The record gives the reactivity of an RNA of 207 nucleotides to DMS and 2A3.
For DMS the reverse transcriptase was MarathonRT.
The data come from the RNA Mapping Database (RMDB), library OK3TST.
The 2A3 profile rests on 1,030 reads.
The reactions ran in a buffer of 150 mM KOAc, 10 mM MgCl2 and 150 mM bicine (pH 8.5), at 24 C.
2A3 adducts were read by reverse transcription with SuperScript II with manganese.
For DMS, 3,008 sequencing reads were counted.

RNA sequence: GGGAACGACUCGAGUAGAGUCGAAAAGCCUGUGGCGAUGUUAUGCGCCUUGCUAUUCGUGUCAAUAAGGAUGGUGUUAUUGAGGACGUAAAGUUCAAGACCUUUGGUUGUGGUAGUGCAAUUGCCUCGUCAUCCUACGUUACCACUAUGGUCAAGAGGAUGAUAGGCAUUUCGAUGCCUAUCAUCCAAAAGAAACAACAACAACAAC
Reactivity to DMS in 0.01 (KOAc 150mM, MgCl2 10mM, bicine 150mM(pH8.5), 24C), signal-to-noise 1, nucleotides 027 to 156: g020c020c030u010g020u000g020g000c050g040a110u020g040u020u000a100u010g000c040g020c040c000u000u000g000c010u000a070u000u010c060g030u000g020u010c030a070a100u000a070a100g070g030a080u010g010g040u010g000u000u000a090u000u020g000a130g020g000a070c050g010u000a050a060a150g020u000u010c000a030a150g020a070c040c030u000u000u000g040g010u000u000g030u000g000g020u010a040g000u020g000c030a090a180u000u010g050c010c090u000c070g000u000c050a070u000c040c020u000a060c030g020u000u010a050c020c000a050c090u000a130u000g000g010u000c040a050a120g000a260
Reactivity to 2A3 in 0.01 (KOAc 150mM, MgCl2 10mM, bicine 150mM(pH8.5), 24C), signal-to-noise 3, nucleotides 027 to 156: g060c020c010u060g020u020g020g050c020g000a050u050g100u190u220a230u230g080c030g050c000c000u000u030g020c050u080a100u130u020c030g010u070g040u160c060a050a060u160a140a030g000g000a070u090g060g080u040g050u140u090a130u050u150g060a050g010g080a020c050g030u120a210a090a030g010u030u100c020a030a000g030a050c020c000u050u070u140g080g000u030u110g040u020g040g000u050a010g050u040g090c040a060a070u090u100g000c000c010u020c020g040u000c000a050u090c000c020u010a040c030g120u120u070a000c000c030a010c030u110a150u150g000g000u000c030a020a020g000a010